[RMDB]
The record gives the reactivity of an RNA of 177 nucleotides to DMS and 2A3.
For DMS, 19,755 sequencing reads were counted.
It was measured as part of the RMDB library OK1LIB.
For 2A3 the reverse transcriptase was SuperScript II with manganese.
Reactivities are rounded to 0.1 and cut off at 0 and 3.
High DMS reactivity at an A or C suggests that its Watson-Crick edge is free.
Conditions: 150 mM KOAc, 10 mM MgCl2 and 150 mM bicine (pH 8.5), 24 C.
Values cover nucleotides 27 to 126.
RNA sequence: GGGAACGACUCGAGUAGAGUCGAAAAGUCGAGCGGGGGCUGCAAUCGGCCCUGAAGUAUGAGGAGUUUUACCUAAAGCGCUUCGGCGGGCACUACAUGGAGUCCGUCUUCCAGAUGUACACCCGCAGAGUAUGAUGAUAUUCGUAUCAUCAUACUCAAAAGAAACAACAACAACAAC
Reactivity to DMS in 0.01 (KOAc 150mM, MgCl2 10mM, bicine 150mM(pH8.5), 24C), signal-to-noise 7, nucleotides 027 to 126: g010u010c030g010a080g020c040g000g010g020g000g030c030u010g030c290a110a110u020c090g020g000c020c020c020u000g000a050a080g000u020a060u020g000a070g000g000a150g000u020u030u040u050a110c050c030u010a060a120a130g000c060g000c010u010u010c040g000g000c020g010g020g000c030a080c060u000a070c120a080u030g000g010a030g000u000c040c060g010u010c050u000u000c040c030a070g020a100u000g000u020a060c200a120c000c000c010g020c110a140
Reactivity to 2A3 in 0.01 (KOAc 150mM, MgCl2 10mM, bicine 150mM(pH8.5), 24C), signal-to-noise 9, nucleotides 027 to 126: g060u040c010g010a010g010c020g000g010g000g010g010c010u030g020c040a080a220u190c060g030g000c010c000c000u000g010a030a010g050u110a080u270g080a050g070g020a050g060u060u080u150u210a130c020c010u070a100a070a040g100c050g000c000u080u080c020g010g000c000g000g010g000c030a020c050u110a050c040a180u170g060g010a040g030u030c050c020g020u010c000u050u030c020c010a030g010a090u070g020u060a030c040a070c050c000c010g020c030a020